This 177-nucleotide RNA was probed chemically with DMS. The DMS profile rests on 1,292 reads. DMS adducts were read by reverse transcription with MarathonRT. Reactivities are given for positions 27 through 126.

RNA sequence: GGGAACGACUCGAGUAGAGUCGAAAAUCGGUGAGGUAGCCUUGAGAGAGAUUAAGUCUCAAGUUGACACCUCAAAUGGUGAUUUCCAGAAGUUGAAUGUUGGAUUCCGCAUGACUCCUGAUGAAAACACGUAAGCAACUUUCGAGUUGCUUACGUGAAAAGAAACAACAACAACAAC
Reactivity to DMS in 0.01 (KOAc 150mM, MgCl2 10mM, bicine 150mM(pH8.5), 24C), signal-to-noise 2, nucleotides 027 to 126: u000c040g040g020u020g020a010g050g020u000a020g080c100c000u000u000g000a030g010a060g010a200g000a220u010u040a120a160g010u000c000u010c000a000a000g000u010u000g020a140c110a040c000c010u000c010a020a040a050u010g010g020u020g000a270u010u000u020c020c000a110g010a070a110g010u010u000g010a110a070u000g000u000u010g030g000a160u000u000c040c080g010c060a050u000g000a050c050u000c070c020u000g010a090u020g000a080a090a090a110